[RMDB]
RNA sequence: GGGAACGACUCGAGUAGAGUCGAAAACUGUGGCUGGCGCGCCCAGCAACUGCCCGACGGCACGGUGAUUUGGACGCUGCCGGGUAACCAGACCUACGUCACCACCCCGGGCAGCGCGCUGCUGUUCUGAUAACGACGCCUUCGGGCGUCGUUAUCAAAAAGAAACAACAACAACAAC
Reactivity to 2A3 in 0.01 (KOAc 150mM, MgCl2 10mM, bicine 150mM(pH8.5), 24C), signal-to-noise 1, nucleotides 027 to 126: c000u040g010u080g110g000c030u010g040g000c020g080c110g080c160c000c000a000g000c080a060a010c000u110g040c020c020c000g110a100c030g010g000c040a000c110g000g070u070g090a180u090u090u280g060g030a080c010g040c080u040g030c010c000g000g080g000u100a060a040c030c000a000g010a010c000c100u160a050c290g000u000c010a000c070c000a030c000c030c010c000g000g080g010c000a000g060c000g000c010g020c010u020g000c020u000g010u060u010c000

Conditions: 150 mM KOAc, 10 mM MgCl2 and 150 mM bicine (pH 8.5), 24 C.
The record gives the reactivity of an RNA of 177 nucleotides to 2A3.
For 2A3 the reverse transcriptase was SuperScript II with manganese.
The 2A3 profile rests on 504 reads.